This 177-nucleotide RNA was probed chemically with 2A3 and DMS. The reactions ran in a buffer of 150 mM KOAc, 10 mM MgCl2 and 150 mM bicine (pH 8.5), at 24 C. For DMS the reverse transcriptase was MarathonRT. Values cover nucleotides 27 to 126. 2A3 adducts were read by reverse transcription with SuperScript II with manganese.
[RMDB]
RNA sequence: GGGAACGACUCGAGUAGAGUCGAAAAUAAAGGGAAAAUAAUUGAUAUUCAUUUAUCUGUAAAAGCCACUGAAAAUAUUGAUGGCGAAGUGCUGUUCAAAGCAACACAACCUUUAGGUAGAACAAUGUAUGUUAUAUAAAUUCGUUUAUAUAACAUAAAAAGAAACAACAACAACAAC
Reactivity to 2A3 in 0.01 (KOAc 150mM, MgCl2 10mM, bicine 150mM(pH8.5), 24C), signal-to-noise 4, nucleotides 027 to 126: u060a000a020a000g060g010g040a030a080a030a100u180a050a070u170u080g010a020u030a020u060u070c040a030u080u040u210a030u010c030u000g130u130a020a040a080a040g000c010c000a020c030u070g100a130a050a220a030u200a170u130u080g130a220u040g030g000c020g000a110a040g030u010g000c020u000g060u110u080c110a170a110a040g000c000a030a020c010a000c010a050a040c020c000u040u040u040a040g040g020u110a040g040a130a030c050a110a070u150g040
Reactivity to DMS in 0.01 (KOAc 150mM, MgCl2 10mM, bicine 150mM(pH8.5), 24C), signal-to-noise 4, nucleotides 027 to 126: u010a010a030a000g000g000g000a070a100a080a120u010a080a110u010u030g000a030u000a010u010u000c180a120u020u020u010a000u000c010u000g000u040a040a080a080a280g000c000c010a020c050u020g010a060a130a140a150u050a050u010u030g010a080u000g000g000c000g000a070a100g010u000g010c040u030g010u010u020c280a090a100a080g010c000a010a010c040a010c050a150a130c010c010u010u000u010a000g000g000u030a070g000a090a070c060a040a080u030g010